[RMDB]
RNA sequence: GGGAACGACUCGAGUAGAGUCGAAAAGGCGUGAUCUCGGCUCACUGCACCCUCUACCUCCCAGGUUCAAGUGAUUCUCCUGCCUCAGCCUCCUGAGUAGCUGGGAUUACAGGCACCUGCCAACCGCCUUUCCUACGGAGUUCGCUCCGUAGGAAAGAAAAGAAACAACAACAACAAC
Reactivity to DMS in 0.01 (KOAc 150mM, MgCl2 10mM, bicine 150mM(pH8.5), 24C), signal-to-noise 1, nucleotides 027 to 126: g000g020c020g030u000g000a070u010c040u010c020g010g020c020u000c050a060c020u000g030c070a130c040c010c020u010c040u000a120c060c010u000c000c010c000a100g010g010u000u000c080a050a060g020u010g010a090u000u000c030u000c030c020u000g000c030c010u000c040a040g010c030c010u000c070c020u000g000a070g040u010a040g010c010u010g010g000g000a030u000u000a040c040a090g010g000c060a090c050c060u000g000c050c030a040a130c100c030g040c140
An RNA of 177 nucleotides, treated with DMS and read out base by base.